An RNA of 177 nucleotides, treated with DMS and 2A3 and read out base by base.
RNA sequence: GGGAACGACUCGAGUAGAGUCGAAAAGGGCACUGCCUAGAGAAGGAGCUAACUUUAAAAAAAAUAAACCAGGCUGGUCACAGUGGCUCAUGCCUGUAAUCCCAGCGCUUUGGGAGGCCAAGGCAGGCCUGGUAUAUACAUUCGUGUAUAUACCAGGAAAAGAAACAACAACAACAAC
Reactivity to DMS in 0.01 (KOAc 150mM, MgCl2 10mM, bicine 150mM(pH8.5), 24C), signal-to-noise 7, nucleotides 027 to 126: g010g010g010c040a110c060u000g000c020c010u000a100g010a140g010a140a100g010g000a080g010c030u010a080a110c090u000u000u010a010a000a000a020a080a070a110a170u010a060a070a110c180c020a040g010g010c030u000g010g000u000c060a100c150a090g010u000g000g010c010u000c080a060u010g010c010c010u000g000u000a080a090u000c010c000c010a070g000c240g010c090u000u010u000g020g000g010a080g000g000c040c030a060a030g000g010c020a070g000g010
Reactivity to 2A3 in 0.01 (KOAc 150mM, MgCl2 10mM, bicine 150mM(pH8.5), 24C), signal-to-noise 6, nucleotides 027 to 126: g030g010g010c040a030c140u070g020c010c020u120a090g030a020g010a180a090g050g030a040g030c020u050a050a100c040u090u150u220a130a040a030a000a010a010a040a110u080a060a040a010c040c000a010g040g000c030u030g010g020u050c040a080c040a190g110u100g090g000c010u040c140a020u130g000c000c000u020g020u030a020a030u000c000c010c000a030g050c130g020c100u120u150u020g030g000g000a050g040g040c020c010a020a010g010g000c000a010g020g050
2A3 adducts were read by reverse transcription with SuperScript II with manganese.
Values are in units of 0.01, from 0 to 300, in steps of 10.